[RMDB]
RNA sequence: GGGAACGACUCGAGUAGAGUCGAAAAUAAACUCAUAUCAUCUAUAGAAUCCUCUGCACUAAUAGCGCCUAUGGAUAAGAUUAAUAAGAGCAAUAAUCCUAAUACUGCAUAAGUCUUAUUAGAAUUCCACUAAUUAUCGUUUCGACGAUAAUUAGUGAAAAGAAACAACAACAACAAC
Reactivity to DMS in 0.01 (KOAc 150mM, MgCl2 10mM, bicine 150mM(pH8.5), 24C), signal-to-noise 5, nucleotides 027 to 126: u080a090a110a120c070u010c050a070u020a080u020c090a020u030c030u000a080u040a160g010a070a090u000c010c000u010c010u000g000c010a010c020u010a140a120u030a050g010c040g020c010c010u010a020u000g020g010a020u000a090a030g010a070u010u030a090a060u020a040a040g010a090g010c060a060a060u000a050a070u010c030c030u010a060a060u020a070c090u020g000c060a070u010a060a090g010u010c040u000u000a030u000u010a030g010a090a080u050u020c090
Reactivity to 2A3 in 0.01 (KOAc 150mM, MgCl2 10mM, bicine 150mM(pH8.5), 24C), signal-to-noise 9, nucleotides 027 to 126: u120a010a060a020c030u020c040a050u070a050u100c040a020u020c030u080a080u040a200g080a080a060u040c010c010u000c020u030g000c010a010c020u080a060a140u070a170g000c020g010c010c000u020a030u030g000g000a010u010a050a040g010a010u040u060a050a070u080a130a040g030a000g040c050a030a090u090a090a040u080c000c010u060a110a050u070a130c070u060g040c030a070u060a260a060g040u050c020u060u080a090u040u040a070g080a150a090u150u010c030